[RMDB]
RNA sequence: GGGAACGACUCGAGUAGAGUCGAAAAAGAGCUUUCUCCCACUUGGCUACCAAGUGGAUUGAGCGCGACAUCGAUGGCCGUCAGGUCAUCGUUGCCGACAUAGGGAGCGCACCAGCGAGAAGAGUCGCUUCUGUCCCUGUUUCGACAGGGACAGAAGAAAAGAAACAACAACAACAAC
Reactivity to DMS in 0.01 (KOAc 150mM, MgCl2 10mM, bicine 150mM(pH8.5), 24C), signal-to-noise 1, nucleotides 027 to 126: a110g000a210g000c010u000u000u000c000u010c270c010c010a000c020u000u000g010g000c150u030a150c080c000a010a010g000u020g010g000a130u000u000g000a040g000c060g020c030g000a010c000a010u000c020g000a020u000g000g010c000c000g000u000c300a070g010g010u000c000a000u000c000g010u000u000g000c000c000g010a030c070a080u010a080g000g000g000a050g020c050g000c110a120c030c010a090g000c030g000a100g010a130a120g010a120g020u000c120g000
Reactivity to 2A3 in 0.01 (KOAc 150mM, MgCl2 10mM, bicine 150mM(pH8.5), 24C), signal-to-noise 1, nucleotides 027 to 126: a020g110a030g000c000u000u010u030c010u030c100c000c000a000c000u000u000g050g000c120u150a280c140c000a000a000g020u030g000g040a030u020u210g060a060g030c210g000c020g040a030c000a000u000c000g020a010u020g000g010c000c000g090u260c240a190g010g000u000c000a000u000c030g000u030u010g000c020c010g000a000c010a030u150a030g040g010g000a030g030c020g000c030a070c060c010a040g040c040g070a040g040a220a070g060a060g080u070c020g000